[RMDB]
RNA sequence: GGGAACGACUCGAGUAGAGUCGAAAAGCUGAAGCGAGGCGCGGCAACCGGCGCAGCACCAGGCCGAGCGGGCCGGCACGCGCGCCGACAGCCAGCGGCGUCCGGUGUCGUCCUGGGAGCCACGACACGUGGAGGGAAGGUUCGCCUUCCCUCCACGAAAAGAAACAACAACAACAAC
Reactivity to 2A3 in 0.01 (KOAc 150mM, MgCl2 10mM, bicine 150mM(pH8.5), 24C), signal-to-noise 1, nucleotides 027 to 126: g010c030u070g050a080a010g050c020g080a120g070g000c030g000c060g030g000c020a080a050c040c000g040g000c020g000c050a060g030c000a010c040c040a120g040g000c000c000g030a090g110c060g060g040g000c000c000g040g000c050a030c090g100c020g060c020g020c010c010g000a040c020a020g040c010c030a020g010c020g010g030c000g000u060c010c010g030g010u040g000u020c010g000u040c000c010u000g040g030g060a020g050c040c010a040c040g050a010c010a000
Reactivity to DMS in 0.01 (KOAc 150mM, MgCl2 10mM, bicine 150mM(pH8.5), 24C), signal-to-noise 2, nucleotides 027 to 126: g020c050u000g000a100a120g020c020g000a150g010g000c040g020c020g010g000c020a070a120c130c030g010g020c020g020c020a050g020c020a140c080c070a140g020g000c030c030g030a200g000c090g030g010g010c010c000g000g000c040a040c170g000c110g000c040g020c000c010g000a060c150a090g000c030c040a090g000c000g030g010c040g000u000c030c040g020g010u000g020u010c040g000u000c080c020u030g000g000g000a120g000c010c030a080c030g000a020c100a100

An RNA of 177 nucleotides, treated with 2A3 and DMS and read out base by base.
The reactions ran in a buffer of 150 mM KOAc, 10 mM MgCl2 and 150 mM bicine (pH 8.5), at 24 C.
The data come from the RNA Mapping Database (RMDB), library OK2TRN.
The DMS profile rests on 1,782 reads.
For 2A3 the reverse transcriptase was SuperScript II with manganese.